[RMDB]
RNA sequence: GGGAACGACUCGAGUAGAGUCGAAAAGAAAGGCAAGAAGCCUGUGAUGUCUUAGCCACAAUGUCUGAACCUGGCUGAAGGAUUCUUCUGAAGACACACACUUGGGCACUGAGGCUUCCAGGAGAAAUGUUCUAGGUCUCUUCGGAGACCUAGAACAAAAAGAAACAACAACAACAAC
Reactivity to 2A3 in 0.01 (KOAc 150mM, MgCl2 10mM, bicine 150mM(pH8.5), 24C), signal-to-noise 2, nucleotides 027 to 126: g060a070a000a000g060g010c120a140a160g050a030a000g050c000c000u000g120u110g050a170u090g000u010c010u090u170a060g070c000c000a130c030a100a080u030g120u090c140u040g000a070a080c030c000u070g120g000c040u060g050a040a010g020g050a210u220u000c000u010u020c000u030g000a010a030g000a010c010a000c010a000c010a010c060u090u110g000g110g010c090a040c140u020g030a010g040g040c010u000u070c000c000a000g000g030a060g060a010a130a040
Reactivity to DMS in 0.01 (KOAc 150mM, MgCl2 10mM, bicine 150mM(pH8.5), 24C), signal-to-noise 2, nucleotides 027 to 126: g000a110a120a070g040g010c020a060a050g000a090a070g010c000c000u010g010u050g020a010u010g020u000c020u000u000a190g000c000c030a090c060a130a200u000g010u000c060u000g000a010a050c100c160u010g000g000c010u000g000a060a070g000g000a090u000u000c030u040u050c050u000g110a090a010g000a020c000a000c160a010c210a130c230u010u020g000g000g020c230a180c090u000g000a040g030g000c020u010u040c000c000a000g030g010a080g010a060a100a050
Conditions: 150 mM KOAc, 10 mM MgCl2 and 150 mM bicine (pH 8.5), 24 C. Structure probing data (2A3 and DMS) for a 177-nucleotide construct. It was measured as part of the RMDB library RFM100. In probing experiments dimethyl sulfate is read out at A N1 and C N3, which are open when not base-paired. The DMS profile rests on 1,477 reads.